[RMDB]
RNA sequence: GGGAACGACUCGAGUAGAGUCGAAAAGAAACAGGGUCAGUCUUACUUGACGAUCUCUUUCUCGGCUUAUUCUGUAGUGAGCUUGGAACAUACAGAUCAUUUUAGAGGAUUAAAAAAAGUCAUAAAGUCUUUCCAUACUGCCCAUAGGACCACCCCACCAUCAUUAGUACUUCGGUACUAAUGAUGGAAAAGAAACAACAACAACAAC
Reactivity to 2A3 in 0.01 (KOAc 150mM, MgCl2 10mM, bicine 150mM(pH8.5), 24C), signal-to-noise 8, nucleotides 027 to 156: g060a010a090a000c070a040g010g020g060u110c040a040g020u010c070u090u110a220c050u110u120g020a020c020g010a040u020c030u020c010u050u050u010c030u010c020g030g000c010u060u060a060u210u060c040u120g100u090a060g050u030g090a030g020c040u050u040g040g020a040a020c020a040u120a040c030a050g030a040u030c020a050u060u100u110u140a060g010a030g050g040a040u120u260a030a070a050a030a020a030a020g050u050c030a060u120a160a100a030g020u020c010u040u040u010c020c000a020u030a120c020u040g010c020c000c010a030u100a040g040g010a030c020c010a040c020c020c010c000a010
Reactivity to DMS in 0.01 (KOAc 150mM, MgCl2 10mM, bicine 150mM(pH8.5), 24C), signal-to-noise 2, nucleotides 027 to 156: g010a130a070a140c100a090g000g000g040u000c050a050g000u000c050u000u000a100c070u010u000g000a040c030g000a070u000c010u010c030u010u010u000c020u010c110g020g000c000u000u000a030u000u010c080u000g010u000a130g020u000g010a050g000c020u010u000g010g010a080a060c200a160u010a100c040a040g010a030u000c030a020u010u000u010u000a080g030a090g020g000a130u050u030a000a000a000a050a040a030a060g030u000c040a070u000a060a080a120g000u010c020u000u000u000c010c020a190u000a140c060u000g010c020c000c010a120u010a060g030g000a050c030c010a100c020c020c000c020a270
The record gives the reactivity of an RNA of 207 nucleotides to 2A3 and DMS.
Reactivities are given for positions 27 through 156.
Conditions: 150 mM KOAc, 10 mM MgCl2 and 150 mM bicine (pH 8.5), 24 C.